This 170-nucleotide RNA was probed chemically with 2A3 and DMS.
The reactions ran in a buffer of 150 mM KOAc, 10 mM MgCl2 and 150 mM bicine (pH 8.5), at 24 C.
[RMDB]
RNA sequence: GGGAACGACUCGAGUAGAGUCGAAAAGGGGGGUAGCGCUCCGUGCCCUUCCAUAGCACUGGGGUCCCGGGCCCCCUCCCAGGAAUGGGAAUGGGGGGAGAUCGACCGGGUCCCGCAGAACCCGAUGAGCGGCAGACGUUCGCGUCUGCCAAAAGAAACAACAACAACAAC
Reactivity to 2A3 in 0.01 (KOAc 150mM, MgCl2 10mM, bicine 150mM(pH8.5), 24C), signal-to-noise 5, nucleotides 027 to 129: g010g000g000g010g000g000u000a020g050c020g000c090u000c030c050g030u010g000c020c000c010u100u150c080c010a200u130a080g110c080a000c050u010g000g000g000g000u010c000c030c000g040g000g030c010c010c000c000c010u020c000c000c000a010g020g130a130a110u050g010g000g000a070a130u160g040g010g010g000g040g000a070g040a100u180c090g070a070c020c000g000g000g000u020c010c000c000g000c000a000g010a030a030c010c000c000g010a130u170g000a000g000c000
Reactivity to DMS in 0.01 (KOAc 150mM, MgCl2 10mM, bicine 150mM(pH8.5), 24C), signal-to-noise 3, nucleotides 027 to 129: g050g010g020g010g010g070u000a070g030c130g000c040u020c060c190g040u010g030c020c030c090u070u000c030c020a200u070a100g060c200a090c040u010g000g010g030g010u030c000c010c000g020g000g000c000c000c000c000c000u000c010c000c030a040g020g180a280a210u000g000g000g030a020a010u110g060g040g010g020g020g000a040g020a090u000c240g040a180c040c020g000g000g000u030c030c010c010g040c020a020g020a070a070c050c020c010g030a120u060g000a010g020c000